[RMDB]
RNA sequence: GGGAACGACUCGAGUAGAGUCGAAAAGAUAUGGAGUGAACUACAGGGCGACCGUUGGCGUUGAAACAGUUCGUAAGUCGGAAACGACUUACGAACUGUGGAGCCAACGGCCCUGCACUCCUAAGUCCGUUUACAGUAUGUUCGCAUACUGUAAACGAAAAGAAACAACAACAACAAC
Reactivity to DMS in 0.01 (KOAc 150mM, MgCl2 10mM, bicine 150mM(pH8.5), 24C), signal-to-noise 4, nucleotides 027 to 126: g010a080u010a300u010g010g010a020g010u000g010a110a050c090u030a300c010a000g000g000g010c080g000a110c070c020g010u000u000g000g000c010g010u000u020g000a260a140a020c000a010g010u010u000c010g020u000a000a010g010u000c000g010g010a100a120a300c010g000a020c000u000u010a010c010g000a010a000c000u000g000u000g010g000a120g010c020c000a010a010c000g010g000c010c000c010u000g000c030a010c000u000c000c000u000a010a100g000u000c030
Reactivity to 2A3 in 0.01 (KOAc 150mM, MgCl2 10mM, bicine 150mM(pH8.5), 24C), signal-to-noise 2, nucleotides 027 to 126: g090a060u120a060u300g000g020a000g030u000g010a080a090c110u240a060c300a020g000g050g000c090g290a150c060c070g020u000u010g000g000c010g100u150u010g000a030a010a000c020a000g000u010u010c010g000u010a020a000g010u020c030g030g090a110a120a150c030g000a000c010u020u010a000c010g000a000a000c010u000g000u010g000g000a000g000c000c000a000a000c000g020g000c000c000c010u000g000c000a000c000u010c000c000u020a070a030g020u040c050

Structure probing data (DMS and 2A3) for a 177-nucleotide construct. Source: RMDB library TTRINS, as collected in RNAgym. The DMS profile rests on 5,392 reads. Conditions: 150 mM KOAc, 10 mM MgCl2 and 150 mM bicine (pH 8.5), 24 C.